[RMDB]
Chemical mapping of a 207-nucleotide RNA with 2A3.
RNA sequence: GGGAACGACUCGAGUAGAGUCGAAAAACGUUUUGAAGCUUGUUCCUUUGCUAGAAUAUAAAUAAGCCAGCAUAUGUUUCACAUUGCUUUAGUGCUUUGUUCUUUUCUAUUUUAUUCUUUAUGAUUAAAGUAGUUUCUAAGGAAAACUCUGUUCAAACAAGUUAUUAUGCUUCGGCAUAAUAACUUGAAAAGAAACAACAACAACAAC
Reactivity to 2A3 in 0.01 (KOAc 150mM, MgCl2 10mM, bicine 150mM(pH8.5), 24C), signal-to-noise 2, nucleotides 027 to 156: a000c050g030u050u070u050u080g080a100a010g020c020u060u000g070u070u070c060c000u060u040u050g010c020u020a050g040a120a070u150a070u090a190a180a120u090a070a000g000c010c010a000g000c010a020u050a030u300g050u100u300u220c060a030c000a040u010u030g000c010u080u080u180a100g010u160g110c000u000u050u020g030u000u040c020u060u150u000u000c010u020a030u000u010u000u020a050u110u060c010u000u300u060a260u290g000a020u000u000a010a010a010g010u000a000g030u030u130u080c050u060a020a000g010g010a000a050a050a050c050u080c070u100g040u050u060c090a090a060a110
The 2A3 profile rests on 510 reads. The RNA was probed in 150 mM KOAc, 10 mM MgCl2 and 150 mM bicine (pH 8.5) at 24 C. For 2A3 the reverse transcriptase was SuperScript II with manganese. It was measured as part of the RMDB library RFM130.